An RNA of 177 nucleotides, treated with DMS and read out base by base. Reactivities are rounded to 0.1 and cut off at 0 and 3.
RNA sequence: GGGAACGACUCGAGUAGAGUCGAAAAGAGGCUCCCCUGCUGCGCCAAGCUCCCAGUUGAGUAGGGGCCUGCCCAGAUUAGAGCAGCUAAGCCAGGAAAGAUGGAGCCCAAGGGCUGGGACGACACACCUGUAGUCGACAUUCGUGUCGACUACAGGAAAAGAAACAACAACAACAAC
Reactivity to DMS in 0.01 (KOAc 150mM, MgCl2 10mM, bicine 150mM(pH8.5), 24C), signal-to-noise 2, nucleotides 027 to 126: g000a090g020g010c000u000c050c030c040c020u010g020c000u000g000c110g020c100c070a060a160g020c070u000c000c010c050a110g000u000u000g010a080g000u010a060g010g020g020g000c070c050u000g000c040c020c010a140g000a160u020u020a050g000a060g020c050a050g000c070u000a040a100g030c060c010a030g000g030a070a130a090g000a100u000g010g000a140g000c040c060c040a090a100g000g010g020c000u010g000g000g000a080c080g020a040c090a120c160a130